[RMDB]
RNA sequence: GGGAACGACUCGAGUAGAGUCGAAAAAAGAACAUGACCAGUCCACAAAUACAGAAACCGAACGACACGUAGGUGAUGCUAUCACAGAAGUCCCACAUACCAUAGUUAUCGUGUCGCGAUUUCUCGUACUGAACCUUAAACCAUGUACACGCGGUGACCAGGCUUGAUGUUUCGACAUCAAGCCUGGAAAAGAAACAACAACAACAAC
Reactivity to 2A3 in 0.01 (KOAc 150mM, MgCl2 10mM, bicine 150mM(pH8.5), 24C), signal-to-noise 1, nucleotides 027 to 156: a000a030g120a040a010c020a050u040g020a000c000c060a000g040u040c040c010a150c000a030a090a000u150a000c020a000g120a140a000a000c000c000g130a140a040c030g000a000c030a000c000g010u000a080g050g040u050g000a020u060g040c050u110a020u110c080a090c010a130g160a150a010g060u000c030c020c000a050c000a050u220a060c040c170a060u190a030g030u020u100a050u300c020g000u000g000u000c000g000c000g000a000u000u040u000c100u000c060g080u100a080c040u100g130a140a190c030c020u040u070a110a000a000c010c010a040u090g060u090a010c000a060c070g090c050g010g010u010g000a000

The record gives the reactivity of an RNA of 207 nucleotides to 2A3.
The 2A3 profile rests on 401 reads.
Source: RMDB library OK3TST, as collected in RNAgym.